[RMDB]
RNA sequence: GGGAACGACUCGAGUAGAGUCGAAAAUCCUAAGUCACAUCGAAACGUUUCGCGAUGAAACCUAAGGGAGGAUCGGAAACGAUCCGAAGAACUUAGGUGGAGCGAAACUGAGUAGAUGUGAUAUGGAAAAAGGAACAGCGGUUCGCCGCUGUUCCAAGAGACGAUAUAUGUUCGCAUAUAUCGUCUCAAAAGAAACAACAACAACAAC
Reactivity to 2A3 in 0.01 (KOAc 150mM, MgCl2 10mM, bicine 150mM(pH8.5), 24C), signal-to-noise 4, nucleotides 027 to 156: u040c010c000u040a140a020g020u010c000a000c000a000u000c000g020a010a000a010c020g000u000u000u000c020g010c140g160a300u050g000a030a010a000c000c000u010a000a000g010g020g000a020g010g000a010u000c010g020g030a060a050a070c010g000a000u010c000c000g000a030a010g020a010a010c000u000u000a000g000g010u010g010g000a010g000c000g000a000a000a000c000u000g000a000g000u000a000g000a000u000g000u000g000a000u000a030u020g020g040a030a060a050a080a110g010g010a000a010c000a000g020c000g010g100u100u150c290g040c100c000g000c020u000g000u010u000c000c000a000a000
Reactivity to DMS in 0.01 (KOAc 150mM, MgCl2 10mM, bicine 150mM(pH8.5), 24C), signal-to-noise 1, nucleotides 027 to 156: u000c000c010u020a100a250g020u000c000a030c000a030u010c010g000a300a230a300c300g030u000u000u000c020g080c000g000a080u000g040a160a130a110c020c020u010a000a030g000g030g000a140g040g020a050u030c030g010g000a220a090a240c040g000a030u000c000c000g010a110a040g000a180a130c020u000u000a000g010g000u030g000g000a120g030c000g010a020a000a030c000u020g030a080g000u010a070g000a030u030g020u000g000a010u000a040u000g000g000a000a080a060a100a170g040g040a030a050c030a010g010c010g000g030u010u000c250g020c000c010g050c030u000g000u000u030c010c010a000a200